[RMDB]
RNA sequence: GGGAACGACUCGAGUAGAGUCGAAAAAUAGGGUCAGUAUUGGUAGGACCUACACCCGUCAACGUAAUUGGAAGAGGCUUGAUGACUCGGAUGGGCUGUACUUUAAAUUUUCCAAUUAGUCCUAUUAUACUGAUGCAUCUUUCGAGAUGCAUCAGUAAAAAGAAACAACAACAACAAC
Reactivity to 2A3 in 0.01 (KOAc 150mM, MgCl2 10mM, bicine 150mM(pH8.5), 24C), signal-to-noise 4, nucleotides 027 to 126: a010u040a010g040g010g000u040c030a060g080u060a090u110u090g060g020u040a030g020g070a010c030c000u030a020c010a030c010c020c000g010u050c040a040a070c070g140u110a120a090u110u130g080g000a080a030g020a020g050g010c050u130u170g080a060u100g020a190c000u000c000g000g090a020u050g040g020g040c060u020g030u080a050c010u070u130u070a020a170a130u090u030u030u010c010c000a000a000u010u030a040g020u000c000c010u030a040u120u040a110
Reactivity to DMS in 0.01 (KOAc 150mM, MgCl2 10mM, bicine 150mM(pH8.5), 24C), signal-to-noise 4, nucleotides 027 to 126: a070u010a030g010g000g000u000c060a110g010u000a120u010u000g000g020u010a070g010g010a110c180c160u010a030c040a080c020c010c020g020u020c060a030a110c100g030u010a070a090u030u010g000g000a100a070g020a030g000g010c060u020u000g010a130u010g020a060c020u000c040g010g010a050u000g000g000g000c200u000g000u000a050c140u010u050u050a040a030a160u010u030u010u010c000c020a040a040u000u010a140g010u010c010c020u000a010u030u010a150
Overview
The record gives the reactivity of an RNA of 177 nucleotides to 2A3 and DMS. The reactions ran in a buffer of 150 mM KOAc, 10 mM MgCl2 and 150 mM bicine (pH 8.5), at 24 C.